[RMDB]
Annotation
This 207-nucleotide RNA was probed chemically with 2A3 and DMS. The DMS profile rests on 11,621 reads.
RNA sequence: GGGAACGACUCGAGUAGAGUCGAAAACAAAGAUGUCCAUGUUCUAAUCCUGUGCAUUGUUCUUAUCUUACAUGGGAAGAAACUUGGUGAUUAAGAUUUUGAGAUGGGAUGAUUAUCCUUGGUUAUCUAGUUAGGCCCAGUGUAAUCCCAAGGGUUAAUCCAUAGUAAAUUUCGAUUUACUAUGGAUAAAAGAAACAACAACAACAAC
Reactivity to 2A3 in 0.01 (KOAc 150mM, MgCl2 10mM, bicine 150mM(pH8.5), 24C), signal-to-noise 5, nucleotides 027 to 156: c040a010a100a020g060a060u090g030u020c020c010a020u030g030u030u030c030u070a100a100u020c010c010u050g020u030g040c040a080u050u070g060u150u090c080u140u150a100u070c020u030u030a050c020a040u040g020g010g020a020a050g040a040a060a040c020u020u020g040g040u070g040a040u080u090a060a060g030a090u040u110u170u240g120a090g030a070u120g040g000g020a030u080g020a040u150u190a040u090c000c010u000u000g010g010u060u030a050u090c060u060a040g060u060u030a070g010g050c000c000c010a030g000u020g010u070a030a050u020c000c000c030a030a030g060g000g020u000u030a030
Reactivity to DMS in 0.01 (KOAc 150mM, MgCl2 10mM, bicine 150mM(pH8.5), 24C), signal-to-noise 4, nucleotides 027 to 156: c050a060a120a130g010a120u000g010u000c010c040a040u000g000u000u000c030u000a100a170u000c010c000u000g040u000g020c030a060u000u000g010u000u000c170u020u010a100u000c020u000u000a030c020a040u000g000g010g020a070a160g000a130a060a060c030u000u000g010g020u010g010a090u000u010a070a090g010a170u000u000u010u000g010a120g000a150u000g000g000g030a080u000g000a110u000u000a080u000c040c030u010u000g020g020u000u000a060u010c030u000a120g010u000u000a150g020g000c000c000c030a090g000u010g030u000a060a100u000c040c020c020a060a070g010g030g030u010u000a060
The data come from the RNA Mapping Database (RMDB), library OK3TST.
For 2A3 the reverse transcriptase was SuperScript II with manganese.
Conditions: 150 mM KOAc, 10 mM MgCl2 and 150 mM bicine (pH 8.5), 24 C.
For 2A3, 3,680 sequencing reads were counted.